[RMDB]
RNA sequence: GGGAACGACUCGAGUAGAGUCGAAAACACGAAGCCACGGCAUUGGUCGAUGGCGUGAAACAGCGGGUUCCAGUCGAACAUGGCCAGCAUGUAACCCGGCAAGGUAUUGGCAACGAACAUCUUGCCCAUUUAGUUCUGGUUUCGACCAGAACUAAAUAAAAGAAACAACAACAACAAC
Reactivity to 2A3 in 0.01 (KOAc 150mM, MgCl2 10mM, bicine 150mM(pH8.5), 24C), signal-to-noise 9, nucleotides 027 to 126: c060a010c040g070a080a010g020c010c010a010c010g010g000c060a130u120u270g250g010u030c020g090a240u010g000g000c020g000u010g000a060a100a010c040a020g040c030g010g010g010u090u030c040c010a040g060u080c060g070a060a040c020a060u040g030g000c040c010a010g030c020a050u060g020u060a050a060c010c000c000g000g000c010a020a010g030g000u070a070u120u160g050g010c070a110a040c070g060a050a020c020a020u000c010u000u010g000c000c010c000
Reactivity to DMS in 0.01 (KOAc 150mM, MgCl2 10mM, bicine 150mM(pH8.5), 24C), signal-to-noise 8, nucleotides 027 to 126: c070a090c120g010a130a160g000c020c000a040c020g000g000c000a260u020u010g020g010u010c020g000a090u000g000g000c010g000u010g000a090a080a090c110a070g010c040g000g000g000u010u010c030c030a070g000u020c120g010a080a110c080a050u000g000g010c030c030a060g000c040a060u000g010u010a110a110c030c020c020g010g000c010a030a010g000g000u000a070u010u000g000g010c150a080a150c120g010a040a050c080a020u000c010u000u000g010c010c010c170